[RMDB]
Source: RMDB library OK3TST, as collected in RNAgym.
An RNA of 207 nucleotides, treated with 2A3 and DMS and read out base by base.
For 2A3 the reverse transcriptase was SuperScript II with manganese.
High DMS reactivity at an A or C suggests that its Watson-Crick edge is free.
The RNA was probed in 150 mM KOAc, 10 mM MgCl2 and 150 mM bicine (pH 8.5) at 24 C.
For 2A3, 523 sequencing reads were counted.
For DMS, 1,426 sequencing reads were counted.
RNA sequence: GGGAACGACUCGAGUAGAGUCGAAAAUUAGUAAGAGAAAGAACAGCUCAAACUCAUGUAUUUAAUAGAUUUCCAAAUAAUCAGAUUCUUAUUCGACCACCAGCACCUACUAUAACCACCAUUACUGAAAACGUGCCAGCGAUAACAGAUCAUGGAAUCCCAAGUAACUAUUCGUAGUUACUUGGGAAAAAGAAACAACAACAACAAC
Reactivity to 2A3 in 0.01 (KOAc 150mM, MgCl2 10mM, bicine 150mM(pH8.5), 24C), signal-to-noise 1, nucleotides 027 to 156: u040u040a000g010u030a050a100g010a000g020a110a080a030g010a110a000c010a000g000c020u010c000a090a080a000c000u030c040a000u110g060u130a190u170u110u040a110a080u100a030g010a010u040u040u000c040c000a180a050a050u200a040a030u090c010a030g030a130u050u060c020u050u080a040u060u180c090g000a000c000c000a000c000c000a010g040c000a010c010c000u130a060c040u010a090u060a130a000c030c030a030c000c000a000u020u020a130c000u160g000a060a110a040a040c000g020u040g050c040c000a000g050c080g000a000u000a020a000c010a030g040a050u110c040a030u080g040g100a090a040
Reactivity to DMS in 0.01 (KOAc 150mM, MgCl2 10mM, bicine 150mM(pH8.5), 24C), signal-to-noise 1, nucleotides 027 to 156: u000u000a050g020u010a160a100g000a170g080a160a040a130g000a040a030c060a100g070c050u000c020a050a080a230c060u000c060a090u020g010u000a050u030u000u010a040a060u000a160g000a100u000u020u010c020c010a130a060a100u000a110a120u010c100a070g000a070u000u000c090u000u020a070u020u010c050g020a100c020c020a080c050c000a060g020c020a070c010c020u010a050c040u000a050u010a030a110c000c020a040c010c000a080u000u000a150c020u000g000a050a050a130a070c030g030u000g010c050c020a060g040c090g000a120u000a070a070c030a100g000a100u000c100a100u000g000g030a170a210